[RMDB]
RNA sequence: GGGAACGACUCGAGUAGAGUCGAAAAUCGAUGGCGUUCGCGCCAUCGAAGAGCCGUACCGCGUAGCACGCGGAUAGGAGAGAAGAUAUCCAAGGCCAUGGAGGAGGCGUGCUUUCGAGCACGCCAAUGUAAGAGUUGGAUUCGUCCAACUCUUACAAAAAGAAACAACAACAACAAC
Reactivity to DMS in 0.01 (KOAc 150mM, MgCl2 10mM, bicine 150mM(pH8.5), 24C), signal-to-noise 6, nucleotides 027 to 126: u000c000g000a000u000g000g010c000g030u000u010c230g020c010g020c000c000a000u000c000g000a010a060g010a120g020c010c010g020u010a190c010c020g000c010g010u000a120g020c110a300c020g010c030g010g010a090u000a040g010g000a080g000a090g000a090a080g000a080u010a090u010c020c030a050a070g020g000c020c050a100u000g010g010a100g000g010a160g010g020c000g030u000g000c000u000u000u010c140g000a020g020c000a010c000g010c000c010a000a010
Reactivity to 2A3 in 0.01 (KOAc 150mM, MgCl2 10mM, bicine 150mM(pH8.5), 24C), signal-to-noise 4, nucleotides 027 to 126: u020c000g000a010u010g000g000c010g020u040u030c260g010c000g000c080c000a000u000c000g000a000a000g000a010g020c010c020g040u110a070c020c000g000c020g040u050a050g110c200a030c070g010c010g010g010a040u140a040g050g010a030g020a000g040a110a020g040a060u100a040u070c020c010a010a030g060g000c010c010a040u080g040g020a050g020g090a070g030g010c010g000u010g000c000u110u090u090c230g070a000g000c000a000c000g010c000c000a010a000